[RMDB]
RNA sequence: GGGAACGACUCGAGUAGAGUCGAAAAGGCUUUCGGCGCCUAUAUGCGCGAUGCGUGGGCUGCGCAGCGACGAUAUUUCUGGAAUAUCGCCGAUCCGGGCUGGGCUUAUGGGCUUUACUAUGCCGUAAGGUGCAGUAAAUUUCGAUUUACUGCACCUAAAAGAAACAACAACAACAAC
Reactivity to DMS in 0.01 (KOAc 150mM, MgCl2 10mM, bicine 150mM(pH8.5), 24C), signal-to-noise 7, nucleotides 027 to 126: g010g010c040u000u000u000c040g020g010c090g010c010c060u010a100u010a050u010g010c020g010c030g010a070u010g010c050g030u000g010g000g010c060u010g010c030g010c040a080g010c010g000a030c010g010a020u000a020u000u000u000c230u010g020g000a050a030u000a020u000c010g010c020c000g000a100u000c090c050g010g000g010c070u010g000g000g000c070u000u000a070u000g010g010g010c050u000u000u010a090c140u010a100u010g010c020c010g010u010a090
Reactivity to 2A3 in 0.01 (KOAc 150mM, MgCl2 10mM, bicine 150mM(pH8.5), 24C), signal-to-noise 4, nucleotides 027 to 126: g030g010c020u040u050u150c050g050g000c020g020c000c010u080a080u010a010u140g040c050g010c040g120a120u090g020c040g040u070g000g110g000c050u100g010c030g000c040a030g030c020g020a050c010g000a020u000a020u040u070u070c130u140g080g110a030a010u010a010u040c000g010c010c000g000a010u020c010c030g000g010g020c050u030g010g030g000c000u050u020a070u130g040g000g000c010u050u040u000a070c030u050a060u180g030c000c000g010u020a040